Source: RMDB library RNAMAK, as collected in RNAgym.
An RNA of 207 nucleotides, treated with 2A3 and DMS and read out base by base.
The 2A3 profile rests on 2,394 reads.
2A3 adducts were read by reverse transcription with SuperScript II with manganese.
RNA sequence: GGGAACGACUCGAGUAGAGUCGAAAAUCCUAAGUCGAGCUACAGCAGGUGGGAGGGAGCGUUAUCGGAAACGAUAACGCUUUGAUCUCCCAUAUUGGCUGUAGACCCUCGAUAUGGAAAAACCUUUUAGUUGGUCUUCGGACCAACUAAAAGGUAAACGUAUACUAAGCUUCGGCUUAGUAUACGUAAAAGAAACAACAACAACAAC
Reactivity to 2A3 in 0.01 (KOAc 150mM, MgCl2 10mM, bicine 150mM(pH8.5), 24C), signal-to-noise 1, nucleotides 027 to 156: u010c000c000u020a090a010g040u010c000g000a000g010c010u000a000c000a010g010c000a010g030g040u020g000g000g000a000g010g040g000a000g010c010g000u040u000a000u000c010g030g030a070a060a030c020g000a000u000a010a000c020g000c000u030u030u000g000a000u000c000u000c000c000c010a010u000a000u000u030g110g020c000u020g000u030a040g000a020c050c020c010u010c000g000a000u010a090u110g050g040a010a060a050a110a040c000c000u000u000u000u000a000g000u000u000g020g000u000c000u050u030c260g140g000a000c010c000a000a000c000u000a000a000a000a000g000g010u020a000a020
Reactivity to DMS in 0.01 (KOAc 150mM, MgCl2 10mM, bicine 150mM(pH8.5), 24C), signal-to-noise 2, nucleotides 027 to 156: u000c000c000u000a100a260g020u010c000g030a020g000c030u000a010c000a020g000c020a100g010g040u000g000g030g020a020g030g000g010a020g060c010g040u000u000a000u010c020g010g010a200a190a300c000g020a010u000a000a010c000g030c000u000u000u020g010a130u020c040u000c000c000c000a010u000a010u000u010g040g060c000u020g000u000a010g010a090c060c180c010u010c010g010a070u000a200u000g040g000a090a110a070a120a090c000c000u000u000u000u000a000g010u000u000g020g010u000c000u000u000c300g060g020a030c010c000a000a000c010u000a000a010a000a010g020g030u000a000a030